[RMDB]
RNA sequence: GGGAACGACUCGAGUAGAGUCGAAAAUCCAAUAUGAAUCUAGUCACUAAAUAAACACAAUUAGCUACUGUGUGUAAUAGUGAGUGUUGAUAACACAAAAUAAUAGUAUAGUUUUGGAAGAUUAUACGCGCCCUUGCUCCGUUCGCGGAGCAAGGAAGUCCUCCCUUAUCUUCGGAUAAGGGAGGACAAAAGAAACAACAACAACAAC
Reactivity to 2A3 in 0.01 (KOAc 150mM, MgCl2 10mM, bicine 150mM(pH8.5), 24C), signal-to-noise 1, nucleotides 027 to 156: u000c020c000a040a090u300a120u100g210a060a000u050c140u170a120g050u020c000a000c050u040a050a060a060u010a000a020a000c000a000c000a010a080u120u150a100g050c050u140a080c070u000g000u000g010u000g030u000a010a000u000a080g000u000g020a020g000u030g010u040u020g070a080u300a300a030c030a000c000a020a050a070a020u200a070a100u090a140g010u000a000u000a020g000u000u020u180u140g150g060a100a090g010a110u000u040a010u020a010c030g030c000g070c140c000c000u000u000g000c000u020c000c010g030u040u010c070g010c020g090g000a000g030c000a000a020g000g000a000a000
Conditions: 150 mM KOAc, 10 mM MgCl2 and 150 mM bicine (pH 8.5), 24 C. Chemical mapping of a 207-nucleotide RNA with 2A3. It was measured as part of the RMDB library M2RFPK. For 2A3, 523 sequencing reads were counted.